RNA sequence: GGGAACGACUCGAGUAGAGUCGAAAACAGUUAUGUACUGGUGUACUACAACCAAUGGAUAUGCUGGAGUUAAAACGAAUUUCCAAUUCAUCAGAAAGGAAGAUCCUAGAGCUUUACAAUUAGCCAACUCUAUGACGACAUUCGUGUCGUCAUAGAGAAAAGAAACAACAACAACAAC
Reactivity to 2A3 in 0.01 (KOAc 150mM, MgCl2 10mM, bicine 150mM(pH8.5), 24C), signal-to-noise 7, nucleotides 027 to 126: c020a010g030u080u070a140u160g110u150a060c010u010g030g000u050g020u070a110c030u070a040c070a090a020c010c010a030a070u130g030g020a080u090a040u150g030c030u010g030g050a080g090u110u180a050a130a020a030c070g040a060a100u050u030u030c010c020a030a100u110u070c030a130u050c050a120g120a090a040a010g070g020a030a060g010a060u040c010c010u060a050g000a020g080c010u090u120u100a120c120a070a100u130u070a060g000c010c020a020a110
Reactivity to DMS in 0.01 (KOAc 150mM, MgCl2 10mM, bicine 150mM(pH8.5), 24C), signal-to-noise 3, nucleotides 027 to 126: c080a040g020u030u040a040u010g010u040a040c070u040g000g020u000g020u010a080c150u020a130c220a020a010c020c030a010a090u020g000g010a020u010a010u000g010c060u010g020g020a110g030u020u020a030a050a150a100c200g000a070a090u000u020u010c010c010a080a150u000u000c050a090u060c200a150g010a020a070a160g000g000a040a030g000a060u020c010c030u000a040g000a120g000c000u000u000u000a050c230a050a090u040u050a060g010c010c030a060a070
An RNA of 177 nucleotides, treated with 2A3 and DMS and read out base by base. Values cover nucleotides 27 to 126. The DMS profile rests on 4,012 reads. Values are in units of 0.01, from 0 to 300, in steps of 10. It was measured as part of the RMDB library OK1LIB.